[RMDB]
RNA sequence: GGGAACGACUCGAGUAGAGUCGAAAACGAGAGGUGUUCUCCCAUGGCCCCUAUGCGAGCAGUUUCGUCUCUGACUGAGCUUGGAAUGUGCGGAGGUGAUGUUACCCUACAAACCCCUCAUCACGAACUGUCUCGUGAUGAGACACACUUGACGUCAGUUAGUGUUAACAUUCGUGUUAACACUAACAAAAGAAACAACAACAACAAC
Reactivity to DMS in 0.01 (KOAc 150mM, MgCl2 10mM, bicine 150mM(pH8.5), 24C), signal-to-noise 2, nucleotides 027 to 156: c080g000a120g040a070g020g010u000g020u000u000c030u000c020c030c010a000u010g010g020c020c020c010c030u000a090u000g030c010g040a060g030c020a100g010u000u000u000c070g000u010c050u010c030u000g010a120c060u010g000a110g010c020u010u010g030g020a100a070u010g010u000g030c060g040g020a110g010g040u010g000a080u010g000u000u010a050c030c000c030u010a260c100a050a090a110c040c010c160c020u000c010a030u010c000a030c000g000a000a230c140u000g000u020c100u010c010g010u000g010a020u010g010a030g000a060c050a060c040a050c040u020u020g030a100c060g010u000c060a140
Reactivity to 2A3 in 0.01 (KOAc 150mM, MgCl2 10mM, bicine 150mM(pH8.5), 24C), signal-to-noise 6, nucleotides 027 to 156: c060g010a020g000a010g040g050u060g050u180u050c050u040c010c030c030a120u110g080g020c020c000c000c010u070a090u150g030c020g040a030g030c030a030g010u030u060u080c070g030u020c040u000c020u090g070a120c030u050g020a020g020c010u020u070g040g050a110a080u080g020u040g030c030g030g040a050g010g030u060g010a030u050g010u040u120a110c020c000c000u040a040c090a020a090a110c020c000c000c000u000c010a000u010c000a000c010g010a050a050c090u160g070u160c030u030c090g000u000g000a000u010g000a000g020a000c020a000c010a000c070u060u130g070a030c060g100u140c020a060